[RMDB]
RNA sequence: GGGAACGACUCGAGUAGAGUCGAAAAGGCGCCGUCGGCGGGCGCCGAACGCUCGCCGGCUCAGCCGCAAACCCCUUCCGAUUGGGCGAUGCGCCUGGCCGGCCACGCGGGCGCGAGCGGGCUGCGACGUAUCGUGAUCGUUCGCGAUCACGAUACGAAAAGAAACAACAACAACAAC
Reactivity to DMS in 0.01 (KOAc 150mM, MgCl2 10mM, bicine 150mM(pH8.5), 24C), signal-to-noise 1, nucleotides 027 to 126: g000g020c030g120c080c230g010u000c000g020g070c000g000g010g000c000g020c060c060g000a000a240c020g000c020u010c300g010c000c080g000g000c000u100c040a010g000c240c010g000c010a000a050a250c300c020c000c010u000u000c100c270g000a230u000u040g000g000g000c010g000a260u010g010c000g020c300c000u010g000g000c000c060g010g030c010c170a010c120g010c010g020g010g000c030g010c010g000a180g020c040g020g010g030c040u000g000c020g000a140

This 177-nucleotide RNA was probed chemically with DMS. Source: RMDB library OK2TRN, as collected in RNAgym. The DMS profile rests on 525 reads. The reactions ran in a buffer of 150 mM KOAc, 10 mM MgCl2 and 150 mM bicine (pH 8.5), at 24 C.